[RMDB]
RNA sequence: GGGAACGACUCGAGUAGAGUCGAAAAUCGUUGACGGAAAGGAAGCUGAUGCCUUCGUUACCGCUUUGCGAGAAAAUGCAGACUUUGAUCUUCGUACCGUCGGUGUUUUCCGCACGAUUGAAGUCAGCCACGAGGCGCGUACGUACGUCUUUGGUCCUCGGCUACAUGGAUUCGUCCAUGUAGCCGAAAAAGAAACAACAACAACAAC
Reactivity to 2A3 in 0.01 (KOAc 150mM, MgCl2 10mM, bicine 150mM(pH8.5), 24C), signal-to-noise 1, nucleotides 027 to 156: u050c020g000u050u090g070a070c010g000g020a050a030a060g070g020a040a000g010c120u160g090a150u120g000c000c050u000u030c070g040u060u090a050c010c030g020c090u110u170u120g020c030g010a100g040a100a000a040a020u100g040c080a010g000a060c030u090u130u280g030a120u110c060u070u060c150g060u050a110c060c030g120u130c060g010g000u070g080u040u010u070u010c040c040g000c010a020c040g020a000u000u080g010a020a000g040u020c000a000g010c040c000a030c150g040a010g000g070c080g000c020g060u060a020c080g000u020a040c000g010u050c000u030u010u060g000g000u000c000c020